[RMDB]
RNA sequence: GGGAACGACUCGAGUAGAGUCGAAAAUCUCAAGCCCGCGCCCUCGGGGCCUGGGGGUGGGGCCCCAGCAGAUGUCUGGAUUUGGUAGCCAGGGCCUGGAGCCGGAUGCUGAGAAUGAGGCCUGCAAAUAAACAGUGGGAUUCGUCCCACUGUUUAUAAAAGAAACAACAACAACAAC
Reactivity to 2A3 in 0.01 (KOAc 150mM, MgCl2 10mM, bicine 150mM(pH8.5), 24C), signal-to-noise 4, nucleotides 027 to 126: u020c000u000c000a000a010g020c010c000c000g140c030g040c050c010c010u070c020g050g030g000g000c000c000u010g010g000g010g000g020u050g020g060g000g000c010c000c000c000a020g010c010a050g070a230u170g100u130c010u000g040g050a160u120u100u140g090g000u060a020g040c010c000a050g010g030g060c000c010u040g080g010a020g000c010c000g010g010a010u080g000c030u040g010a020g060a100a050u180g040a050g030g020c000c010u040g060c040a100a090
Reactivity to DMS in 0.01 (KOAc 150mM, MgCl2 10mM, bicine 150mM(pH8.5), 24C), signal-to-noise 2, nucleotides 027 to 126: u010c020u000c010a080a120g000c000c010c010g000c060g000c020c010c020u000c040g010g000g010g000c030c000u010g010g010g010g000g030u010g010g000g000g000c050c070c030c010a030g010c030a200g010a080u030g010u040c000u010g000g000a150u000u040u000g010g010u040a110g000c050c010a080g010g010g010c030c000u030g010g000a140g010c010c010g010g000a050u010g010c020u030g000a070g000a070a080u010g010a060g010g010c000c000u000g010c110a100a100